[RMDB]
Source: RMDB library M2PK50, as collected in RNAgym. This 177-nucleotide RNA was probed chemically with 2A3 and DMS. DMS adducts were read by reverse transcription with MarathonRT. Conditions: 150 mM KOAc, 10 mM MgCl2 and 150 mM bicine (pH 8.5), 24 C.
RNA sequence: GGGAACGACUCGAGUAGAGUCGAAAAUCUGUUCCCUUCGGGGAACAGAACUGCGCCUGGACUUAAAGCCAUUGCACUUAAGAAAAUAAACAUACAAAAUAAGCCCUUCUGGUUUCGACCAGAAGAAACGUCGUUAUUAGUUCGCUAAUAACGACGUAAAAGAAACAACAACAACAAC
Reactivity to 2A3 in 0.01 (KOAc 150mM, MgCl2 10mM, bicine 150mM(pH8.5), 24C), signal-to-noise 1, nucleotides 027 to 126: u020c000u000g000u000u010c010c030c000u000u030c140g030g000g000g010a000a000c000a010g010a010a020c040u070g060c030g000c000c040u040g010g030a080c020u060u130a080a070a070g000c000c000a080u050u170g000c060a020c020u100u070a100a000g050a080a150a080a080u210a030a130a010c010a010u300a080c020a100a120a080a170u170a070a050g090c000c000c000u000u010c000u030g000g060u040u080u100c220g080a020c000c000a020g000a000a000g000a030a050
Reactivity to DMS in 0.01 (KOAc 150mM, MgCl2 10mM, bicine 150mM(pH8.5), 24C), signal-to-noise 1, nucleotides 027 to 126: u010c000u000g000u020u000c000c000c010u020u020c140g000g000g020g000a000a020c040a010g020a020a020c150u000g010c170g020c020c050u000g030g000a120c020u000u000a020a080a180g030c030c020a050u000u000g000c040a040c080u000u000a060a070g000a150a130a120a070u000a040a060a070c120a040u000a140c040a010a040a110a140u020a100a130g000c120c050c000u000u000c000u010g010g000u000u000u020c160g000a020c020c020a000g000a000a010g020a010a050